Chemical mapping of a 177-nucleotide RNA with DMS and 2A3. It was measured as part of the RMDB library OK2TRN. The 2A3 profile rests on 657 reads. The RNA was probed in 150 mM KOAc, 10 mM MgCl2 and 150 mM bicine (pH 8.5) at 24 C. As a SHAPE reagent, 2A3 marks flexible, mostly unpaired nucleotides at the ribose 2'-OH. Reactivities are given for positions 27 through 126.
RNA sequence: GGGAACGACUCGAGUAGAGUCGAAAAUAAUCCAUUCUGUCGCCGUGUUAGUCGCAGGGUGUAUAGGCACAGGUCAGACCAUAUAAAAACCCAAAUUAAUAUAUGUCAGGUAUACAGCCUGGCUGCAAGCUAGGUGGAUUUUCGAAUCCACCUAGCUAAAAGAAACAACAACAACAAC
Reactivity to DMS in 0.01 (KOAc 150mM, MgCl2 10mM, bicine 150mM(pH8.5), 24C), signal-to-noise 1, nucleotides 027 to 126: u010a250a190u000c090c020a110u030u010c060u000g000u000c050g070c010c070g070u000g010u000u000a130g000u040c060g040c040a090g000g010g010u000g000u010a000u010a050g000g050c110a060c040a010g010g020u000c080a160g060a160c040c040a040u030a080u010a060a020a100a280a060c010c010c010a040a020a200u000u000a060a070u040a150u000a110u030g000u010c050a000g000g000u000a060u000a090c300a070g000c000c010u000g010g000c000u010g000c220a070
Reactivity to 2A3 in 0.01 (KOAc 150mM, MgCl2 10mM, bicine 150mM(pH8.5), 24C), signal-to-noise 1, nucleotides 027 to 126: u050a000a030u100c000c000a050u050u020c030u080g160u100c030g000c050c000g190u130g070u170u080a030g060u090c050g000c050a120g000g000g060u080g050u000a080u050a190g040g000c060a010c030a090g080g000u000c000a000g010a080c040c010a000u060a000u010a100a130a010a070a090c020c020c000a030a000a050u170u120a080a100u130a020u030a030u290g000u070c050a070g040g000u010a150u040a280c030a010g050c000c000u000g000g000c000u010g010c060a040